RNA sequence: GGGAACGACUCGAGUAGAGUCGAAAAGCCAGCUAGUGAAGGCGCAUUCUCACCGCCUAGAAUCUUCUUAGGAAGUUCAAGACCGGGCAUAUUCGCUAGGUUGUAGUCGAGGGCGACCCAUACGCCGCUUUUGCGUGAAGUCUCACGGAUCAGCGCAGAAAAGGAAAGAUUUCGAUCUUUCCUUUUCAAAAGAAACAACAACAACAAC
Reactivity to 2A3 in 0.01 (KOAc 150mM, MgCl2 10mM, bicine 150mM(pH8.5), 24C), signal-to-noise 2, nucleotides 027 to 156: g010c010c010a000g010c040u030a010g030u000g110a060a000g010g010c010g000c090a110u110u020c010u010c040a040c020c020g010c000c000u010a060g030a070a140u190c020u050u010c010u070u110a090g140g040a000a000g000u030u050c040a050a010g030a030c050c000g070g010g000c070a030u040a100u170u030c030g010c000u020a020g020g040u040u060g050u040a130g010u020c080g030a040g000g040g040c020g020a080c060c010c040a050u080a110c040g050c040c010g030c060u040u040u030u100g050c000g010u010g010a090a030g110u050c030u050c090a040c050g020g000a030u050c020a000g020c000g000c030a020
Reactivity to DMS in 0.01 (KOAc 150mM, MgCl2 10mM, bicine 150mM(pH8.5), 24C), signal-to-noise 2, nucleotides 027 to 156: g000c000c010a090g010c050u000a030g020u010g000a080a090g000g020c010g010c070a210u000u000c030u000c020a240c050c020g010c080c020u000a150g000a050a050u000c040u000u000c010u010u000a200g040g020a020a020g000u010u000c050a080a090g000a080c000c050g000g010g000c020a140u000a070u000u000c050g050c010u000a030g020g000u000u000g030u000a060g040u000c040g010a080g020g000g010c010g020a160c020c010c030a120u000a080c060g030c030c000g010c030u000u000u010u000g000c050g040u000g030a140a250g020u010c090u020c060a070c060g030g010a070u010c050a190g040c000g070c040a190